[RMDB]
Conditions: 150 mM KOAc, 10 mM MgCl2 and 150 mM bicine (pH 8.5), 24 C. The record gives the reactivity of an RNA of 207 nucleotides to 2A3 and DMS. For 2A3 the reverse transcriptase was SuperScript II with manganese. In probing experiments dimethyl sulfate is read out at A N1 and C N3, which are open when not base-paired. Values cover nucleotides 27 to 156. The data come from the RNA Mapping Database (RMDB), library M2RFPK.
RNA sequence: GGGAACGACUCGAGUAGAGUCGAAAAUAAGCAAAAGACAACCACCUUUCCAGCUGACAAUAGCGUUAUCCCUCUGCACUUCGGUAAUAUGAGGGCACAGUAAAUCCCGCAAGGAUGAGAAUGUGAUUAAACAGUUACAGCUUCGGCUGUAACUGAACAGUGUUUGAAACUUCGGUUUCAAACACUGAAAAGAAACAACAACAACAAC
Reactivity to 2A3 in 0.01 (KOAc 150mM, MgCl2 10mM, bicine 150mM(pH8.5), 24C), signal-to-noise 4, nucleotides 027 to 156: u090a010a010g050c030a040a090a020a020g070a080c060a080a060c040c040a050c030c000u010u080u060c040c050a030g010c040u070g050a110c080a110a120u090a120g050c040g070u120u110a100u120c000c000c000u020c010u030g000c040a020c040u050u050c130g060g000u030a060a040u080a080u300g010a000g010g010g000c010a010c000a020g010u020a000a020a020u010c020c000c000g080c070a020a020g010g020a010u020g000a000g020a030a040u020g010u010g010a010u080u210a060a150a050c000a000g000u000u000a000c000a000g000c000u030u050c150g080g000c000u000g000u000a000a000c000u000g000a020a010
Reactivity to DMS in 0.01 (KOAc 150mM, MgCl2 10mM, bicine 150mM(pH8.5), 24C), signal-to-noise 2, nucleotides 027 to 156: u010a090a110g010c040a100a070a060a100g000a130c080a110a170c000c040a080c050c030u000u010u000c030c010a170g020c030u000g000a140c030a070a120u000a050g030c060g020u000u000a080u000c000c010c010u030c000u010g000c090a070c040u000u000c160g030g000u000a070a130u010a110u010g000a040g010g030g000c040a030c080a080g000u010a050a110a060u000c000c000c000g000c150a110a150g000g000a050u000g020a160g010a120a060u000g000u000g000a140u000u000a060a100a120c020a000g000u000u010a010c010a010g000c010u010u010c300g090g010c010u000g010u010a000a010c000u000g010a020a070